[RMDB]
RNA sequence: GGGAACGACUCGAGUAGAGUCGAAAACUUAACCAAGUUACUGGAAAUGUAAUUAAUAGUAAGUGGAAGUACAAUGGACUUAGUUGGUAAUAAUGGUUGAUGGAAAGUUUAUUGAAUUUCAUCUCCAACCUUUAGUAAGGUUCGCCUUACUAAAGGUAAAAGAAACAACAACAACAAC
Reactivity to DMS in 0.01 (KOAc 150mM, MgCl2 10mM, bicine 150mM(pH8.5), 24C), signal-to-noise 7, nucleotides 027 to 126: c030u000u000a090a110c050c060a080a090g010u000u000a010c010u000g000g020a150a180a120u010g000u000a030a040u000u000a060a110u010a080g000u000a030a040g010u000g010g010a070a080g010u000a040c080a060a070u010g010g010a060c060u000u000a070g000u000u000g000g010u000a080a070u010a060a110u010g010g010u010u010g010a030u010g000g000a030a020a080g000u010u000u010a100u030u000g000a100a090u010u000u000c020a040u000c010u000c020c040a080
Reactivity to 2A3 in 0.01 (KOAc 150mM, MgCl2 10mM, bicine 150mM(pH8.5), 24C), signal-to-noise 4, nucleotides 027 to 126: c000u040u030a010a020c000c010a050a060g030u010u030a030c020u060g030g100a120a080a070u130g030u070a030a020u070u080a070a100u070a110g070u020a030a090g030u040g050g080a060a020g020u020a070c070a070a100u100g040g040a020c010u050u060a050g040u050u050g040g040u060a060a070u070a100a030u120g050g040u140u050g040a010u010g000g050a040a020a030g050u070u200u180a170u120u170g030a070a090u010u030u040c010a010u010c000u020c010c000a000